Structure probing data (2A3) for a 207-nucleotide construct. Values cover nucleotides 27 to 156. For 2A3 the reverse transcriptase was SuperScript II with manganese.
[RMDB]
RNA sequence: GGGAACGACUCGAGUAGAGUCGAAAACCAACGAAGAGCUGGCUCUCGCUGCUUAAUCUAAACAAUUAAGUGAGCGCGCUUAUCGGAUUUUGCGCCUGUCCGGGUCCGAAGGCGUGGAGAAGGCAGGAUCGCCAAGGGAACAUGCCUGGGUUCCUGACCCAAAUAUGAGCUUCGGCUCAUAUUUGGGAAAAGAAACAACAACAACAAC
Reactivity to 2A3 in 0.01 (KOAc 150mM, MgCl2 10mM, bicine 150mM(pH8.5), 24C), signal-to-noise 1, nucleotides 027 to 156: c000c000a030a030c060g070a030a070g030a010g050c060u060g060g010c000u000c020u000c030g000c000u030g010c010u020u000a000a000u020c030u040a070a050a000c010a010a020u030u010a010a000g010u060g250a020g000c010g010c000g000c010u030u120a160u150c010g040g010a030u070u060u130u300g030c010g010c020c010u070g070u080c060c030g080g000g030u020c010c000g000a000a030g010g000c010g000u080g040g020a130g020a110a060g040g010c010a020g030g050a060u050c030g040c070c000a030a040g000g000g000a080a000c020a070u150g050c010c040u000g000g040g060u000u020c010c000u040g070a090